[RMDB]
RNA sequence: GGGAACGACUCGAGUAGAGUCGAAAAGCUGAGUAUACGAGGUUAGUUCAUUCUCGUAUGCAUGAUUGGACAAAUUAAAAUCUCAAUUUGGAUCAGGGCCUCCCUCCAGCGACGGCCCAACAUACAAAAGUUUAGAUCAAUUCGUUGAUCUAAACUUAAAAGAAACAACAACAACAAC
Reactivity to DMS in 0.01 (KOAc 150mM, MgCl2 10mM, bicine 150mM(pH8.5), 24C), signal-to-noise 6, nucleotides 027 to 126: g010c010u000g010a200g010u000a010u000a010c000g010a010g010g010u010u010a130g010u010u010c200a080u010u010c010u000c010g000u000a010u000g020c010a090u010g000a040u000u010g010g010a060c030a010a010a020u000u000a060a050a120a120u010c170u000c120a030a030u000u000u000g000g010a120u000c050a080g000g000g000c000c020u000c010c010c020u000c180c020a020g000c010g000a080c180g000g000c000c000c020a050a030c190a060u000a080c180a030a070
Reactivity to 2A3 in 0.01 (KOAc 150mM, MgCl2 10mM, bicine 150mM(pH8.5), 24C), signal-to-noise 7, nucleotides 027 to 126: g000c010u020g030a010g030u020a000u000a010c010g000a000g050g050u110u140a080g080u240u230c060a040u210u050c020u000c000g000u010a000u010g000c010a040u060g020a050u030u120g020g010a010c010a010a030a030u070u100a090a100a140a300u110c090u020c120a020a040u030u020u040g100g020a160u080c060a080g010g010g000c000c000u000c000c010c000u070c040c010a000g010c000g020a020c030g000g000c000c000c000a010a000c010a020u240a010c050a010a180
Chemical mapping of a 177-nucleotide RNA with DMS and 2A3.
2A3 adducts were read by reverse transcription with SuperScript II with manganese.
High DMS reactivity at an A or C suggests that its Watson-Crick edge is free.